Conditions: 150 mM KOAc, 10 mM MgCl2 and 150 mM bicine (pH 8.5), 24 C. The record gives the reactivity of an RNA of 177 nucleotides to 2A3. For 2A3 the reverse transcriptase was SuperScript II with manganese. It was measured as part of the RMDB library RFM100. The 2A3 profile rests on 731 reads.
[RMDB]
RNA sequence: GGGAACGACUCGAGUAGAGUCGAAAAGACGCAUGAUCUUGAGCUCUUUUCCUAUACUUUGUCCUAUGGCCAGCUUUCUCCUUAUUACGAAGAGAUUGCGGGAUGUGGGUGCAGAGUGGGAAAAUCUGUUGGGUUGACCAUUCGUGGUCAACCCAACAAAAGAAACAACAACAACAAC
Reactivity to 2A3 in 0.01 (KOAc 150mM, MgCl2 10mM, bicine 150mM(pH8.5), 24C), signal-to-noise 1, nucleotides 027 to 126: g000a000c020g060c190a130u230g040a200u070c010u040u020g000a000g020c010u000c000u000u000u000u000c000c000u050a070u030a050c000u000u010u010g000u000c000c020u000a020u000g010g010c010c000a050g040c010u010u000u000c000u000c010c010u130u080a190u110u190a290c120g030a040a040g000a030g000a000u000u000g000c000g010g000g000a030u030g000u020g000g050g020u110g020c000a000g000a000g000u020g000g000g000a000a000a000a090u120c070u010